Chemical mapping of a 177-nucleotide RNA with DMS and 2A3. The reactions ran in a buffer of 150 mM KOAc, 10 mM MgCl2 and 150 mM bicine (pH 8.5), at 24 C.

RNA sequence: GGGAACGACUCGAGUAGAGUCGAAAAUCUGAAAGUGUUCCAUAGGAACACAACAUUGAUUAAUCUUAUUUUUGGUCUCCGUGGCAGGGCCCCUGUGCUUGCGCAUGCCUUGCCACACAGUGUCAUCCAUAACGGACCUAUUCGUAGGUCCGUUAUGAAAAGAAACAACAACAACAAC
Reactivity to DMS in 0.01 (KOAc 150mM, MgCl2 10mM, bicine 150mM(pH8.5), 24C), signal-to-noise 5, nucleotides 027 to 126: u010c020u010g010a070a120a080g020u000g000u000u000c010c010a210u020a200g030g010a010a000c010a000c000a110a130c140a100u030u020g000a060u000u000a110a130u010c050u010u000a130u010u000u010u010u000g010g000u010c030u010c160c180g020u000g000g000c010a020g000g000g010c000c010c050c010u010g010u000g000c020u010u020g010c010g020c000a010u020g000c010c000u000u000g000c000c000a000c010a010c120a080g010u010g000u010c050a070u020c150
Reactivity to 2A3 in 0.01 (KOAc 150mM, MgCl2 10mM, bicine 150mM(pH8.5), 24C), signal-to-noise 9, nucleotides 027 to 126: u040c020u020g070a090a060a050g000u000g000u000u010c020c010a120u190a190g030g010a000a000c000a000c010a020a080c030a090u110u220g040a030u100u160a130a100u070c080u090u150a210u200u170u030u060u070g070g020u040c040u020c090c070g000u000g000g000c000a000g000g000g000c000c000c010c000u000g000u020g010c040u120u110g010c010g000c000a010u200g000c000c000u000u000g000c000c000a000c000a000c000a000g110u100g040u050c050a060u020c040
It was measured as part of the RMDB libraries RFM100 and RFMREP.